[RMDB]
RNA sequence: GGGAACGACUCGAGUAGAGUCGAAAAAAGAAUGGGGGACUGGCUGGCCUGAUGAGAACAAACCCAUGACUAGCGUCGAAACAUCAACAGUGGGGGCUGUUGGUGUCGGCAGCCACUAGUCAAAGAAUCCUAAAGACUUAUUCGUAAGUCUUUAGGAAAAAGAAACAACAACAACAAC
Reactivity to DMS in 0.01 (KOAc 150mM, MgCl2 10mM, bicine 150mM(pH8.5), 24C), signal-to-noise 2, nucleotides 027 to 126: a080a020g010a090a050u010g000g010g000g000g010a130c050u000g010g040c030u000g000g000c060c090u000g000a060u030g010a090g020a040a110c090a060a060a170c040c010c030a130u030g020a020c000u000a000g020c180g010u010c010g000a100a040a040c030a010u010c020a000a000c000a030g010u010g020g000g000g000g000c000u010g000u010u010g020g020u000g000u000c010g010g010c090a050g000c070c080a100c020u010a010g000u000c010a030a130a160g000a100a080
Chemical mapping of a 177-nucleotide RNA with DMS. The reactions ran in a buffer of 150 mM KOAc, 10 mM MgCl2 and 150 mM bicine (pH 8.5), at 24 C.